[RMDB]
RNA sequence: GGGAACGACUCGAGUAGAGUCGAAAAACGAUGAUUUUUCUGAAGACAUGGUGCCGAUAUACUCAGUCAUUUGUUUGUUAAGGCAUCAUAUCGGGAUGAUCUUAUGCUGACUAGCCCAUAUUUGGAUCUCAAAUAGCAAGUUCGCUUGCUAUUUGAGAAAAGAAACAACAACAACAAC
Reactivity to DMS in 0.01 (KOAc 150mM, MgCl2 10mM, bicine 150mM(pH8.5), 24C), signal-to-noise 2, nucleotides 027 to 126: a100c060g020a090u000g000a020u000u000u000u000u000c010u010g030a180a180g000a100c170a020u000g000g010u000g020c000c010g020a200u010a070u000a010c030u000c020a040g020u020c180a150u000u010u010g020u010u000u000g040u000u000a150a200g000g000c000a010u000c000a040u000a020u000c030g000g000g010a040u010g010a030u000c010u000u030a050u000g000c050u010g010a090c140u000a150g010c010c000c000a140u000a070u030u010u000g020g010a300u010
Reactivity to 2A3 in 0.01 (KOAc 150mM, MgCl2 10mM, bicine 150mM(pH8.5), 24C), signal-to-noise 3, nucleotides 027 to 126: a000c030g030a030u060g000a000u000u000u020u020u020c020u030g070a090a030g090a050c040a100u010g000g000u010g000c010c000g010a010u020a010u020a240c010u020c010a020g160u060c100a240u090u160u100g080u000u020u050g030u030u030a050a010g000g000c000a010u000c000a000u000a020u000c000g010g010g000a010u040g010a000u000c020u040u160a140u220g100c070u050g040a080c070u050a070g010c000c050c020a050u090a160u140u060u110g100g020a030u000
An RNA of 177 nucleotides, treated with DMS and 2A3 and read out base by base. DMS adducts were read by reverse transcription with MarathonRT. Conditions: 150 mM KOAc, 10 mM MgCl2 and 150 mM bicine (pH 8.5), 24 C. It was measured as part of the RMDB library RFMREP.